The record gives the reactivity of an RNA of 207 nucleotides to 2A3 and DMS. 2A3 adducts were read by reverse transcription with SuperScript II with manganese. For DMS, 2,409 sequencing reads were counted. For DMS the reverse transcriptase was MarathonRT.

RNA sequence: GGGAACGACUCGAGUAGAGUCGAAAAAGCCGGUAUACGGACCGGCAAAACGUUCAUCUCGUUUUACGGGCCGCAUUAAGAUUGAAGCCAAGGAACGGGGACUUCAGACUACGACUACGGUCGUAGAUUACGCCUCCGAGUUUCGACUCGGAGGCAAUCUAAUUACUAAGUUCGCUUAGUAAUUAGAAAAAGAAACAACAACAACAAC
Reactivity to 2A3 in 0.01 (KOAc 150mM, MgCl2 10mM, bicine 150mM(pH8.5), 24C), signal-to-noise 3, nucleotides 027 to 156: a000g060c040c000g030g020u130a130u080a190c110g030g060a020c010c010g000g020c020a050a050a000a000c080g000u090u070c100a200u070c060u010c010g000u010u000u040u070a040c040g000g010g020c020c040g010c110a070u130u150a100a030g100a110u040u170g080a070a020g000c020c020a040a090g080g000a070a030c040g000g000g000g030a010c010u100u050c110a030g030a110c000u000a000c000g010a000c000u000a030c210g090g000u000c000g000u000a000g010a010u030u120a040c090g000c000c000u000c000c010g000a000g030u000u070u080c100g080a010c000u000c000g000g010a000g000g000c000a000a000
Reactivity to DMS in 0.01 (KOAc 150mM, MgCl2 10mM, bicine 150mM(pH8.5), 24C), signal-to-noise 1, nucleotides 027 to 156: a150g040c040c040g030g000u010a150u020a020c130g020g000a090c010c010g020g020c090a020a000a070a020c040g020u000u050c180a130u010c170u000c020g020u000u000u000u000a110c010g000g000g010c050c010g000c020a080u000u000a110a140g010a190u030u000g000a030a030g000c000c000a050a130g030g000a060a100c060g030g030g020g020a090c020u000u010c020a120g010a180c020u000a020c010g020a010c020u000a140c300g040g000u000c000g010u000a020g010a110u000u010a090c090g000c000c010u000c000c000g020a010g020u000u010u010c240g020a120c020u020c000g000g010a010g030g010c000a000a010